Chemical mapping of a 177-nucleotide RNA with DMS. The reactions ran in a buffer of 150 mM KOAc, 10 mM MgCl2 and 150 mM bicine (pH 8.5), at 24 C. Reactivities are given for positions 27 through 126. For DMS the reverse transcriptase was MarathonRT. The DMS profile rests on 1,525 reads. It was measured as part of the RMDB library OK2TST.

RNA sequence: GGGAACGACUCGAGUAGAGUCGAAAAGGGUCGGUGGCCGCCGAGGGGCCGGCGUUGUAUGCGAUCGUUCUCCCUCUGAGCUGCGGCAAAUCUAGUUUGGCGUCAGUGUUAAGCGGGUAUGACAUAGAUGUAGACCGAGAUUCGUCUCGGUCUACAUAAAAGAAACAACAACAACAAC
Reactivity to DMS in 0.01 (KOAc 150mM, MgCl2 10mM, bicine 150mM(pH8.5), 24C), signal-to-noise 1, nucleotides 027 to 126: g030g010g020u000c060g000g030u000g030g020c060c030g020c020c050g010a080g000g030g030g030c300c050g000g000c000g030u000u010g030u020a070u010g000c020g000a050u000c030g000u000u000c050u010c030c000c000u000c010u000g010a140g000c060u000g000c040g000g010c040a040a020a040u010c160u010a160g010u000u010u000g030g000c010g000u000c030a030g000u000g010u000u000a050a130g000c070g000g000g010u000a050u010g010a050c080a060u010a090g010